[RMDB]
RNA sequence: GGGAACGACUCGAGUAGAGUCGAAAACGCAGUUGCAGCGUAGGAAGUACUUGCACACAGACAUACACAUACACACCGUACGCAAAGAAGGCAAGGCAGCAAGAAAAAAAACUGUGGGAACGUAGAACUCAUACCGUAAGUUCGCUUACGGUAUGAGAAAAGAAACAACAACAACAAC
Reactivity to 2A3 in 0.01 (KOAc 150mM, MgCl2 10mM, bicine 150mM(pH8.5), 24C), signal-to-noise 3, nucleotides 027 to 126: c020g010c010a040g010u080u120g070c040a040g020c040g040u040a040g040g040a100a020g060u060a050c050u050u090g010c050a030c000a000c030a070g070a050c020a050u140a040c040a000c010a080u120a050c020a000c000a010c060c030g090u100a020c050g000c040a030a050a070g100a060a030g050g000c020a010a030g030g030c000a010g000c020a010a040g070a140a020a020a000a000a000a000a000c040u050g010u040g060g030g020a040a020c040g000u070a030g040a080a040
Reactivity to DMS in 0.01 (KOAc 150mM, MgCl2 10mM, bicine 150mM(pH8.5), 24C), signal-to-noise 4, nucleotides 027 to 126: c060g000c060a060g000u010u000g040c050a090g020c040g010u000a090g000g010a120a050g000u010a050c060u000u000g030c050a090c050a060c110a040g010a070c130a050u010a020c080a030c050a080u000a080c080a060c110a080c090c030g020u010a050c090g000c040a070a050a100g010a080a060g000g010c040a030a040g010g000c040a040g010c070a050a070g060a020a000a000a060a040a040a050a040c090u000g010u000g000g000g010a050a050c090g000u010a060g000a130a110
The record gives the reactivity of an RNA of 177 nucleotides to 2A3 and DMS. The reactions ran in a buffer of 150 mM KOAc, 10 mM MgCl2 and 150 mM bicine (pH 8.5), at 24 C. In probing experiments dimethyl sulfate is read out at A N1 and C N3, which are open when not base-paired. It was measured as part of the RMDB library OK2TST. For DMS the reverse transcriptase was MarathonRT.